[RMDB]
The record gives the reactivity of an RNA of 177 nucleotides to DMS and 2A3. Reactivities are given for positions 27 through 126. The DMS profile rests on 13,506 reads. DMS adducts were read by reverse transcription with MarathonRT.
RNA sequence: GGGAACGACUCGAGUAGAGUCGAAAAGAGUAAUGGGCGCGCAAGGUGAGAUGAAGCUGUAGUCUCACUGGAAGGACUAGAGGUUAGAGGAGACCCGCCCAAAACAAGUAACAGCUUCAUCAAGAGACGUAUACCUCAUAUUCGUAUGAGGUAUACGAAAAGAAACAACAACAACAAC
Reactivity to DMS in 0.01 (KOAc 150mM, MgCl2 10mM, bicine 150mM(pH8.5), 24C), signal-to-noise 6, nucleotides 027 to 126: g010a120g020u020a030a100u020g000g020g010c020g030c150g000c090a090a080g010g020u010g010a100g010a010u010g000a050a020g000c000u000g020u000a170g000u000c010u000c050a040c070u020g000g010a070a120g000g010a050c070u000a080g010a110g010g000u000u000a080g010a150g000g000a100g010a040c000c040c040g020c030c020c010a020a040a150a030c120a050a090g000u040a120a060c010a000g020c010u010u000c010a020u000c010a120a140g010a160g000a170
Reactivity to 2A3 in 0.01 (KOAc 150mM, MgCl2 10mM, bicine 150mM(pH8.5), 24C), signal-to-noise 7, nucleotides 027 to 126: g070a010g060u170a080a110u140g010g010g000c020g000c040g020c090a080a050g070g030u070g040a090g010a010u000g010a010a010g010c010u010g010u040a020g020u020c000u020c020a060c020u040g020g050a050a040g060g030a010c030u040a040g010a060g110g040u100u070a050g020a060g150g060a030g030a030c010c010c010g030c000c000c010a030a070a000a000c070a050a010g100u120a050a000c000a010g000c000u040u040c020a050u010c030a090a020g040a010g020a090